[RMDB]
RNA sequence: GGGAACGACUCGAGUAGAGUCGAAAAAUGCUGUACAGUGAAGCCCGGAUUCUGUGUGUGCUGCGUUUGCUGAUUUGCCAUACACAUAAAUAUACGUAGCACCACAUGAUUCGGCUUCGUGGUGCUACCCUACUCCUACGUUCGCGUAGGAGUAGGGAAAAGAAACAACAACAACAAC
Reactivity to 2A3 in 0.01 (KOAc 150mM, MgCl2 10mM, bicine 150mM(pH8.5), 24C), signal-to-noise 3, nucleotides 027 to 126: a000u120g020c060u050g010u050a030c000a040g050u010g050a010a000g030c070c060c000g020g000a010u050u020c000u020g010u000g050u040g000u000g040c010u010g000c000g030u010u120u080g060c080u060g100a300u090u080u180g070c050c020a100u140a170c070a020c030a070u180a090a130a020u230a000u010a030c010g000u010a000g000c000a010c000c000a000c000a000u020g000a000u000u000c000g000g000c000u000u000c000g000u000g040g000u020g010c000u050a110
Reactivity to DMS in 0.01 (KOAc 150mM, MgCl2 10mM, bicine 150mM(pH8.5), 24C), signal-to-noise 3, nucleotides 027 to 126: a060u010g000c050u010g020u010a040c040a140g020u010g010a030a020g000c130c060c040g040g010a030u000u000c180u000g020u000g020u020g040u000g030c010u010g030c040g010u000u000u010g000c250u030g000a170u000u000u000g040c090c150a070u010a120c170a120c090a060u010a060a100a090u010a090u000a020c010g020u000a000g000c000a010c010c000a000c010a010u000g010a020u000u000c050g000g010c010u000u000c010g020u010g010g020u010g010c020u000a090